This 177-nucleotide RNA was probed chemically with DMS. Source: RMDB library OK2TRN, as collected in RNAgym. The DMS profile rests on 1,071 reads.
RNA sequence: GGGAACGACUCGAGUAGAGUCGAAAAGGAGUGCUACCGAAAGGUAGCACUCCAACAAAUCGGUGUAAGUACAGCCCGUCUUACACCGUGCGGCACAGCGGAAACGCUGAUGUCGUAUACACGGCUACCAGUAGCAGUCAUUCGUGACUGCUACUGGAAAAGAAACAACAACAACAAC
Reactivity to DMS in 0.01 (KOAc 150mM, MgCl2 10mM, bicine 150mM(pH8.5), 24C), signal-to-noise 1, nucleotides 027 to 126: g000g000a040g010u000g040c000u010a010c000c000g000a160a120a130g000g010u010a000g020c030a000c000u010c000c000a000a040c120a070a020a050u010c020g020g000u010g000u010a030a000g000u010a060c070a160g000c050c020c070g000u010c000u000u000a000c000a000c030c000g010u000g010c000g010g030c010a020c000a000g060c000g000g000a110a100a140c000g010c000u000g020a060u000g030u000c000g060u000a030u010a070c170a130c180g010g000c080u000a160